[RMDB]
An RNA of 207 nucleotides, treated with 2A3 and DMS and read out base by base. The reactions ran in a buffer of 150 mM KOAc, 10 mM MgCl2 and 150 mM bicine (pH 8.5), at 24 C.
RNA sequence: GGGAACGACUCGAGUAGAGUCGAAAACGAGGCGUGGGCGAAAGUUGCCAUGAGACCGUAACUUUCGUAGUCAUUGAUAAAGGGGCAGGUCUCGCUCUUUUGUCAUUGCGGUUGCCUAGAGGCAUGGAAAACCAUGACAGGUUCGCCUGUCAUGGAAGAAAGACAUUCAGUUCGCUGAAUGUCUUUCAAAAGAAACAACAACAACAAC
Reactivity to 2A3 in 0.01 (KOAc 150mM, MgCl2 10mM, bicine 150mM(pH8.5), 24C), signal-to-noise 5, nucleotides 027 to 156: c050g020a030g010g050c040g030u160g080g070g000c000g000a010a010a010g010u010u010g010c020c040a110u150g060a080g040a150c070c010g010u010a010a010c010u010u010u010c020g000u020a040g080u100c020a030u030u040g010a010u000a020a010a000g010g010g000g000c030a040g020g190u050c050u050c090g000c010u000c000u000u000u010u020g020u000c000a020u010u090g020c040g060g040u080u100g010c000c000u030a070g030a090g060g010c070a060u080g060g030a030a070a010a030c010c000a000u000g000a000c000a000g020g040u060u090c170g060c060c000u000g000u000c000a010u000g010g000a000a010
Reactivity to DMS in 0.01 (KOAc 150mM, MgCl2 10mM, bicine 150mM(pH8.5), 24C), signal-to-noise 2, nucleotides 027 to 156: c040g020a070g030g000c040g020u010g020g000g020c010g000a010a040a050g020u000u010g020c000c040a260u000g030a200g020a140c110c120g000u000a050a030c010u010u000u000c020g020u000a060g000u000c040a130u000u000g000a060u010a010a030a030g000g000g010g010c020a110g010g010u000c100u000c070g020c010u010c010u000u000u000u000g000u010c000a080u000u010g010c040g020g030u000u000g000c010c020u000a110g010a150g030g000c060a130u010g000g000a110a070a100a160c000c010a010u000g010a020c010a010g000g020u010u010c300g000c020c000u000g000u010c010a000u000g010g030a010a030
The DMS profile rests on 5,984 reads.